[RMDB]
Conditions: 150 mM KOAc, 10 mM MgCl2 and 150 mM bicine (pH 8.5), 24 C. An RNA of 177 nucleotides, treated with DMS and read out base by base. For DMS, 557 sequencing reads were counted. Reactivities are rounded to 0.1 and cut off at 0 and 3.

RNA sequence: GGGAACGACUCGAGUAGAGUCGAAAAGAAAAAGCGGAAGUGGCGAAAUCGGUAGACGCAGUUGAUCAAAGAUCAACCGUAGAAAUACGUGCUGGUUCGAGUCCAGCCUUCCGCUCCGAAAAAAAAAGUAAGGUACUGUGUUCGCACAGUACCUUACAAAAGAAACAACAACAACAAC
Reactivity to DMS in 0.01 (KOAc 150mM, MgCl2 10mM, bicine 150mM(pH8.5), 24C), signal-to-noise 1, nucleotides 027 to 126: g010a070a150a140a120a000g040c010g000g000a000a010g050u000g000g000c000g000a000a010a000u000c190g060g010u050a000g010a260c010g000c000a140g000u010u000g060a000u000c000a110a130a190g020a010u000c040a000a050c000c000g020u020a040g000a110a070a130u000a010c000g000u000g000c000u000g010g010u000u000c040g000a300g010u020c000c000a000g000c000c000u000u000c010c010g020c030u000c050c030g000a000a000a000a020a030a000a000a120a090